RNA sequence: GGGAACGACUCGAGUAGAGUCGAAAACACCAAGGACACAGGCAGAAGGUCCAGAUGUAAAUACACAGAGAGUUACUGUGCCUUUUACAGGUCAUCCUUGGGCUCAGGCUGAAAGUGCAGCUGUGCACUUUGCAGUAGAGUUCGCUCUACUGCAAAGAAAAGAAACAACAACAACAAC
Reactivity to DMS in 0.01 (KOAc 150mM, MgCl2 10mM, bicine 150mM(pH8.5), 24C), signal-to-noise 9, nucleotides 027 to 126: c150a240c020c010a040a040g000g010a060c300a040c040a040g010g010c040a030g000a050a050g010g010u000c130c020a050g000a110u000g010u010a030a050a060u000a060c050a050c080a090g010a150g000a150g020u010u010a090c000u000g000u000g000c030c020u000u000u000u000a020c030a020g000g000u000c100a150u000c010c010u000u000g000g010g010c040u000c060a070g010g000c050u000g000a070a060a060g010u000g010c010a030g010c110u010g010u000g010c050a110
Reactivity to 2A3 in 0.01 (KOAc 150mM, MgCl2 10mM, bicine 150mM(pH8.5), 24C), signal-to-noise 7, nucleotides 027 to 126: c060a020c010c010a010a020g020g000a010c030a000c040a140g080g000c010a020g030a140a010g060g010u020c020c010a010g010a030u060g020u080a040a120a070u170a070c070a000c050a060g110a020g010a030g270u120u120a080c010u010g000u000g000c010c010u040u040u010u030a050c060a030g070g020u010c020a040u020c020c000u030u030g000g000g000c020u050c060a060g150g000c010u040g060a180a100a060g110u120g040c000a020g020c060u090g040u070g090c010a030
Structure probing data (DMS and 2A3) for a 177-nucleotide construct. The 2A3 profile rests on 17,176 reads. For 2A3 the reverse transcriptase was SuperScript II with manganese. The reactions ran in a buffer of 150 mM KOAc, 10 mM MgCl2 and 150 mM bicine (pH 8.5), at 24 C. Source: RMDB library OK2TRN, as collected in RNAgym. For DMS, 22,947 sequencing reads were counted.